Chemical mapping of a 177-nucleotide RNA with DMS and 2A3. Reactivities are rounded to 0.1 and cut off at 0 and 3. 2A3 adducts were read by reverse transcription with SuperScript II with manganese. For 2A3, 806 sequencing reads were counted. DMS adducts were read by reverse transcription with MarathonRT. The DMS profile rests on 1,795 reads.
RNA sequence: GGGAACGACUCGAGUAGAGUCGAAAAGGGCCAGCAUCCGUUUCCAGACGGCCCUGAGUGGAUUGUGACGUAACAUGGCACCUUGCUGGCGCUCUCUUAUUAUUUCAUGCCAGUGCCCUCGUUAUGGACGACACGUUGAGUUCGCUCAACGUGUCGUAAAAGAAACAACAACAACAAC
Reactivity to DMS in 0.01 (KOAc 150mM, MgCl2 10mM, bicine 150mM(pH8.5), 24C), signal-to-noise 1, nucleotides 027 to 126: g020g030g000c000c030a010g000c290a050u000c060c020g000u040u000u040c060c170a060g090a120c110g000g000c030c000c040u010g000a120g030u000g000g000a020u010u000g000u000g010a080c050g000u000a060a010c000a040u010g000g020c030a010c100c080u000u010g060c030u000g000g000c030g080c050u010c100u000c080u010u010a070u010u000a080u020u000u000c110a110u030g010c010c000a030g020u000g000c000c000c000u010c110g060u000u020a080u010g000g010
Reactivity to 2A3 in 0.01 (KOAc 150mM, MgCl2 10mM, bicine 150mM(pH8.5), 24C), signal-to-noise 2, nucleotides 027 to 126: g060g020g000c000c020a000g040c010a050u050c050c000g000u030u080u000c040c000a040g040a060c030g050g010c000c000c000u000g010a050g010u160g050g000a000u110u150g040u010g080a000c030g020u010a060a010c020a110u040g010g000c060a080c000c010u030u110g040c020u030g030g000c000g030c000u080c030u000c010u130u060a180u140u080a140u000u170u080c060a060u130g000c010c000a000g030u000g020c000c000c000u060c000g010u010u010a060u080g100g080